[RMDB]
RNA sequence: GGGAACGACUCGAGUAGAGUCGAAAAAUAGUGUUAUUCGUAACACUAUAUAUCCGAACUCAAGGAUUCGUUCCAGAGAGAUGCAUGCUAGCAUGAAAGCAACUGAACAAGCGUUCGCGCUUGUUAAAUGGAGGAUUUAUUUCGAUAAAUCCUCCAUAAAAGAAACAACAACAACAAC
Reactivity to 2A3 in 0.01 (KOAc 150mM, MgCl2 10mM, bicine 150mM(pH8.5), 24C), signal-to-noise 4, nucleotides 027 to 126: a000u010a000g000u000g000u000u010a030u050u060c190g030u020a000a000c000a000c000u000a000u000a000u010a010u000c030c020g020a180a060c000u010c030a040a070g100g000a040u010u010c010g020u020u000c010c000a000g010a000g000a000g010a090u110g030c020a010u110g070c040u080a080g040c020a070u100g130a080a040a010g040c040a020a060c040u130g040a020a000c030a010a010g000c000g010u040u070c200g010c000g020c080u010u000g000u020u050a040a120
Reactivity to DMS in 0.01 (KOAc 150mM, MgCl2 10mM, bicine 150mM(pH8.5), 24C), signal-to-noise 6, nucleotides 027 to 126: a020u000a000g010u000g000u000u000a010u000u010c200g010u000a000a010c000a000c000u000a010u000a050u010a120u000c130c010g000a090a050c010u000c010a070a160g000g010a040u000u000c010g010u000u000c000c000a110g010a130g010a110g010a050u000g000c020a060u000g000c080u010a100g020c050a040u000g000a100a110a080g010c070a060a090c140u000g000a030a010c000a000a010g000c000g020u000u000c240g020c010g020c000u010u000g010u000u000a030a090

Chemical mapping of a 177-nucleotide RNA with 2A3 and DMS. Conditions: 150 mM KOAc, 10 mM MgCl2 and 150 mM bicine (pH 8.5), 24 C. For 2A3 the reverse transcriptase was SuperScript II with manganese. The data come from the RNA Mapping Database (RMDB), library M2PK50. For 2A3, 6,870 sequencing reads were counted.